[RMDB]
RNA sequence: GGGAACGACUCGAGUAGAGUCGAAAAGCCGGUCAGUUCGUUCAUGCCGCGCACGAGGUCGCGCAGGUUAUCGCGCACCACGAAGUCUUCGCCCCGGUCCAUAAACGCCUGCACCGGUCCGGGGACGCCAGCACAACUAAUUCGUUAGUUGUGCUGGAAAAGAAACAACAACAACAAC
Reactivity to DMS in 0.01 (KOAc 150mM, MgCl2 10mM, bicine 150mM(pH8.5), 24C), signal-to-noise 3, nucleotides 027 to 126: g030c030c010g020g030u010c070a080g010u010u000c090g030u000u020c080a100u010g000c020c030g020c090g030c050a170c070g020a080g030g000u000c150g000c030g020c020a090g020g000u020u020a070u010c130g010c000g020c030a070c030c010a140c040g000a080a110g000u000c040u000u000c110g000c020c000c020c000g010g000u000c040c020a100u000a090a080a140c140g000c200c040u000g020c060a120c150c080g000g030u000c020c010g020g000g010g000a030c100g020
Reactivity to 2A3 in 0.01 (KOAc 150mM, MgCl2 10mM, bicine 150mM(pH8.5), 24C), signal-to-noise 3, nucleotides 027 to 126: g050c030c000g000g020u110c110a110g000u080u190c050g050u090u050c030a020u140g020c040c010g000c040g030c060a040c040g040a040g060g020u120c080g040c010g000c030a050g100g070u160u160a180u190c070g000c010g010c030a000c000c000a020c020g050a080a040g100u000c090u130u170c080g050c000c000c020c010g010g010u000c000c000a040u160a110a210a040c090g070c030c050u110g030c040a080c080c040g000g000u000c010c000g000g000g010g000a010c010g020